[RMDB]
RNA sequence: GGGAACGACUCGAGUAGAGUCGAAAAUAGUACGUACACAUGGGAUCGCACAGCUAGGAUGCCAUGUAUGCUAUCAUCUAGUCUCGUACUGUGAUCACUAGGUACUGCUAGCUCUAGCUAGCAUGUAGAAUCUUAAGCGUUUCGACGCUUAAGAUUCAAAAGAAACAACAACAACAAC
Reactivity to 2A3 in 0.01 (KOAc 150mM, MgCl2 10mM, bicine 150mM(pH8.5), 24C), signal-to-noise 6, nucleotides 027 to 126: u070a000g030u010a010c030g010u030a030c050a000c010a080u020g000g020g080a010u020c020g070c160a080c040a150g090c080u100a090g020g150a020u030g090c010c020a020u040g010u020a050u070g010c010u040a030u160c030a040u020c060u030a020g060u030c020u000c100g030u030a030c010u040g030u050g040a050u080c030a030c220u050a050g170g000u050a030c000u030g000c000u000a000g000c010u080c080u190a060g010c000u000a000g000c000a010u090g010u000a040
Reactivity to DMS in 0.01 (KOAc 150mM, MgCl2 10mM, bicine 150mM(pH8.5), 24C), signal-to-noise 7, nucleotides 027 to 126: u000a040g020u010a020c050g000u000a110c160a040c010a010u000g010g000g000a010u000c010g020c120a110c210a160g020c160u010a110g010g020a030u000g000c010c010a020u000g010u000a040u010g000c050u010a060u000c160a060u010c300u000a040g000u000c130u000c030g010u000a020c020u000g000u010g000a110u000c080a090c060u000a070g010g000u000a040c010u000g000c000u000a000g000c010u010c220u010a130g000c000u010a010g000c000a010u000g020u000a080

Structure probing data (2A3 and DMS) for a 177-nucleotide construct. For 2A3 the reverse transcriptase was SuperScript II with manganese. For DMS, 8,653 sequencing reads were counted. For DMS the reverse transcriptase was MarathonRT.